[RMDB]
Structure probing data (2A3 and DMS) for a 177-nucleotide construct. The 2A3 profile rests on 1,908 reads. The reactions ran in a buffer of 150 mM KOAc, 10 mM MgCl2 and 150 mM bicine (pH 8.5), at 24 C. For DMS, 749 sequencing reads were counted. It was measured as part of the RMDB library TTRDEL.
RNA sequence: GGGAACGACUCGAGUAGAGUCGAAAAGAUAUGGAUGCAGCUUUUGACGAAGUCACGGUCGGAAACGACCGAAGUCUUCGAUAAGCUGGUCCUAAGUCAAAUCAGGAGACGUUCGCGUCUCCUGAAAGAGUUACUCUUGGUUCGCCAAGAGUAACUCAAAAGAAACAACAACAACAAC
Reactivity to 2A3 in 0.01 (KOAc 150mM, MgCl2 10mM, bicine 150mM(pH8.5), 24C), signal-to-noise 1, nucleotides 027 to 126: g010a020u040a040u120g010g030a030u110g300c030a020g000c010u070u170u190u260g190a170c060g020a010a010g010u040c010a020c100g000g000u010c010g020g030a050a110a120c020g020a000c000c040g000a010a010g020u000c000u020u030c020g050a070u050a070a010g000c030u000g020g000u010c000c000u020a090a020g040u030c030a020a000a210u040c000a010g000g000a010g000a000c010g030u100u100c210g040c000g190u000c000u000c010c000u000g000a000a000a000
Reactivity to DMS in 0.01 (KOAc 150mM, MgCl2 10mM, bicine 150mM(pH8.5), 24C), signal-to-noise 1, nucleotides 027 to 126: g000a040u000a300u020g000g000a010u000g000c020a000g020c000u000u000u000u020g030a190c190g010a000a030g000u010c010a240c030g000g000u020c000g000g000a050a100a240c010g000a010c000c020g070a030a030g020u000c010u000u000c000g040a090u000a000a060g010c000u020g000g030u000c000c000u010a120a040g000u000c030a060a190a190u030c000a000g020g000a070g000a020c000g040u010u000c200g000c000g020u000c000u000c000c000u030g010a020a040a070